Overview: An RNA of 177 nucleotides, treated with 2A3 and DMS and read out base by base. It was measured as part of the RMDB library OK2TRN. Values cover nucleotides 27 to 126. For DMS the reverse transcriptase was MarathonRT.
RNA sequence: GGGAACGACUCGAGUAGAGUCGAAAAGGGGAGUAUUCUUUUGCAGGUACUUUCUAACUGUCAAGUUGGGUGUCCCCUAAGGGGCGAUGCUCUUUGCAAAUGUCAUUCAUGGAAUGUCCACAUCAGACACCUUGUGAUACUUCGGUAUCACAAGGUGAAAAGAAACAACAACAACAAC
Reactivity to 2A3 in 0.01 (KOAc 150mM, MgCl2 10mM, bicine 150mM(pH8.5), 24C), signal-to-noise 2, nucleotides 027 to 126: g020g000g000g000a000g000u040a050u100u270c050u040u070u060u140g080c040a010g050g000u000a000c000u010u020u080c030u030a120a080c020u050g180u250c070a110a080g060u100u050g050g000g000u000g000u000c020c000c040c010u040a090a170g050g050g000g000c140g000a010u020g010c020u020c000u080u100u060g000c040a050a070a070u150g040u030c010a020u050u060c040a130u170g110g090a060a030u070g000u080c050c030a070c020a150u130c000a010g090a150
Reactivity to DMS in 0.01 (KOAc 150mM, MgCl2 10mM, bicine 150mM(pH8.5), 24C), signal-to-noise 2, nucleotides 027 to 126: g010g000g020g010a030g010u010a030u000u000c030u020u000u000u010g010c040a080g000g020u000a000c030u000u020u020c030u000a030a080c050u000g000u020c230a060a080g000u010u010g000g010g020u000g010u000c000c020c010c030u010a130a090g050g000g030g020c120g040a030u000g000c000u000c020u010u010u020g000c030a030a040a050u020g020u000c040a080u000u000c040a220u000g040g000a040a020u000g020u000c040c180a070c120a090u010c100a070g000a230